Structure probing data (DMS and 2A3) for a 177-nucleotide construct.
The data come from the RNA Mapping Database (RMDB), libraries RFM100 and RFMREP.
Values cover nucleotides 27 to 126.
The reactions ran in a buffer of 150 mM KOAc, 10 mM MgCl2 and 150 mM bicine (pH 8.5), at 24 C.
DMS adducts were read by reverse transcription with MarathonRT.
[RMDB]
RNA sequence: GGGAACGACUCGAGUAGAGUCGAAAAUUGUAUUUUGUGGGUCAAAAGCCUAUGAAGCAACGGCGGCACGCGGACACAGACUAAAAAAUAACUUUCACGAUUAUGAAAAUAAACAUGCAAAGUUGUCGACUGUCAUAUAUUUCGAUAUAUGACAGUCAAAAGAAACAACAACAACAAC
Reactivity to DMS in 0.01 (KOAc 150mM, MgCl2 10mM, bicine 150mM(pH8.5), 24C), signal-to-noise 5, nucleotides 027 to 126: u010u000g010u020a060u020u000u000u000g030u000g000g000g020u000c050a100a070a130a210g000c000c010u000a030u000g000a050a040g010c030a060a060c110g010g020c050g000g010c020a040c060g010c070g010g010a070c080a040c070a060g000a110c090u010a000a020a060a080a060a030u010a010a000c010u000u010u000c000a020c020g010a110u000u000a010u010g000a120a050a080a010u000a010a020a060c020a040u010g000c170a010a010a010g000u000u000g020u000c130
Reactivity to 2A3 in 0.01 (KOAc 150mM, MgCl2 10mM, bicine 150mM(pH8.5), 24C), signal-to-noise 6, nucleotides 027 to 126: u040u060g020u030a100u030u040u010u050g060u040g030g000g000u080c030a070a030a050a020g000c010c000u050a030u050g030a030a010g000c010a020a030c020g070g000c000g020g000c040a010c040g040c020g020g010a010c030a010c010a060g100a050c090u230a030a010a040a010a020a080u180a060a010c020u040u070u040c050a040c060g060a070u040u050a040u150g070a040a020a020a020u090a010a060a010c040a020u090g060c060a030a040a050g000u010u010g020u070c040